RNA sequence: GGGAACGACUCGAGUAGAGUCGAAAAACACUGGUUCCAUGGAAGAGAUUAACAAGCGGGUUCUACUUGAGGUUAGAUAGUUAAUGAGGGCCUCUUUGAGGAAGCCACAUGGAACCAGAGAGGAAAAAGACCUCAUGUAAUUCGUUACAUGAGGUCUAAAAGAAACAACAACAACAAC
Reactivity to DMS in 0.01 (KOAc 150mM, MgCl2 10mM, bicine 150mM(pH8.5), 24C), signal-to-noise 2, nucleotides 027 to 126: a040c140a150c010u000g010g030u000u000c010c000a000u010g000g020a100a150g000a240g000a130u010u010a060a010c030a050a190g000c160g020g000g000u000u000c030u030a130c040u010u020g030a100g010g000u000u000a040g000a050u010a130g010u000u010a040a010u000g000a220g030g000g000c010c000u000c000u000u020u000g030a170g000g010a050a050g000c010c000a170c010a020u010g000g000a010a030c000c000a010g000a020g020a170g000g000a050a050a060a100
Reactivity to 2A3 in 0.01 (KOAc 150mM, MgCl2 10mM, bicine 150mM(pH8.5), 24C), signal-to-noise 2, nucleotides 027 to 126: a000c020a000c000u020g020g030u000u020c000c000a000u020g110g000a170a150g000a030g030a070u120u150a190a000c060a100a090g190c070g060g110g080u050u000c010u020a020c020u060u080g060a030g020g110u030u030a040g020a120u090a030g070u210u240a170a090u160g020a120g060g030g040c000c000u040c210u110u060u170g120a100g010g010a020a020g080c000c000a020c000a020u000g000g000a030a000c000c000a020g020a010g000a010g000g070a100a060a020a040